[RMDB]
RNA sequence: GGGAACGACUCGAGUAGAGUCGAAAACUUGCUUCGAAACACCAUCGAUCGUCCCUUCUUCUUUUACCUUCUCCUGGCUCUUCCGAUGAGACGCGACCGGUGGCAUCACCUCUCGGUUCGUCUUCCAACCUGCUUUUUGUCUAUCUAAGCCUCUGCCGAUUAAGAUAUGCUUCGGCAUAUCUUAAUCAAAAGAAACAACAACAACAAC
Reactivity to DMS in 0.01 (KOAc 150mM, MgCl2 10mM, bicine 150mM(pH8.5), 24C), signal-to-noise 2, nucleotides 027 to 156: c070u000u010g000c100u010u000c050g020a280a090a100c030a150c070c010a110u010c020g020a120u010c040g010u000c010c000c000u010u010c070u040u000c050u020u010u000u000a070c040c010u000u000c000u020c010c020u000g010g000c030u000c020u010u000c050c050g000a150u010g000a130g020a070c000g000c130g030a080c020c030g010g040u010g000g030c030a190u020c100a190c000c000u000c030u000c000g030g000u000u010c020g000u000c020u000u010c070c010a040a120c040c050u000g010c030u020u010u000u010u000g000u000c040u000a140u000c070u000a060a170g010c020c020u000c000u000g020c130c060
Reactivity to 2A3 in 0.01 (KOAc 150mM, MgCl2 10mM, bicine 150mM(pH8.5), 24C), signal-to-noise 5, nucleotides 027 to 156: c100u100u270g050c020u030u030c020g000a050a050a030c040a030c020c030a040u010c010g030a020u000c020g030u020c000c010c000u060u050c050u070u040c010u050u130u040u080a100c020c000u060u040c030u040c030c020u020g030g000c010u010c000u120u050c030c020g100a120u120g030a010g000a020c030g010c100g050a010c010c010g020g020u020g030g000c030a090u100c040a080c020c010u030c020u090c010g000g000u020u010c010g010u000c000u030u030c030c000a040a040c010c020u050g040c010u070u060u050u070u110g060u010c030u040a140u030c040u060a070a060g020c010c020u050c040u070g040c030c030